[RMDB]
RNA sequence: GGGAACGACUCGAGUAGAGUCGAAAACAAUGGGAAAAACGUAACUGCAAACGACGAUACGUUCGCACUGGCAGCCUAACGGCCGCCGUCCUCUGCCUAGUUCACUGACGGGCUAGUGUCGCAAGACCGGUAGCAAUACCGACAGAGGUCAUAUACGCAACUAUAUGUUGUUCGCAACAUAUAGUUGAAAAGAAACAACAACAACAAC
Reactivity to DMS in 0.01 (KOAc 150mM, MgCl2 10mM, bicine 150mM(pH8.5), 24C), signal-to-noise 4, nucleotides 027 to 156: c060a090a120u020g010g010g010a050a050a060a070a120c050g020u010a060a120c070u020g010c020a060a030a090c020g050a090c040g050a210u000a120c070g030u010u010c030g000c040a050c070u000g030g000c000a020g010c020c010u000a140a180c210g020g000c020c000g050c010c000g010u000c000c000u000c000u000g000c020c000u010a130g000u000u000c080a120c060u000g000a070c050g010g010g010c020u000a040g020u010g010u000c090g020c150a150a080g000a020c010c020g000g010u000a010g030c110a080a090u010a070c040c010g000a020c010a030g000a050g010g030u000c000a140u000a130u000a060c100g010
Reactivity to 2A3 in 0.01 (KOAc 150mM, MgCl2 10mM, bicine 150mM(pH8.5), 24C), signal-to-noise 9, nucleotides 027 to 156: c050a030a150u180g040g020g080a060a080a020a010a020c030g030u050a080a060c070u090g010c060a080a070a030c050g100a020c050g060a090u080a140c040g040u030u030c030g000c030a040c110u060g000g000c000a010g000c010c010u100a110a030c060g010g000c000c010g000c000c010g010u010c000c000u000c000u010g010c000c000u000a010g000u020u010c040a080c250u260g140a110c200g000g000g000c000u000a010g010u000g000u050c010g000c050a070a040g000a010c010c000g010g000u000a000g010c020a030a100u000a020c000c000g010a010c000a000g000a010g000g000u010c010a040u110a010u030a100c060g000
Source: RMDB library ARCHII, as collected in RNAgym. Structure probing data (DMS and 2A3) for a 207-nucleotide construct. Conditions: 150 mM KOAc, 10 mM MgCl2 and 150 mM bicine (pH 8.5), 24 C.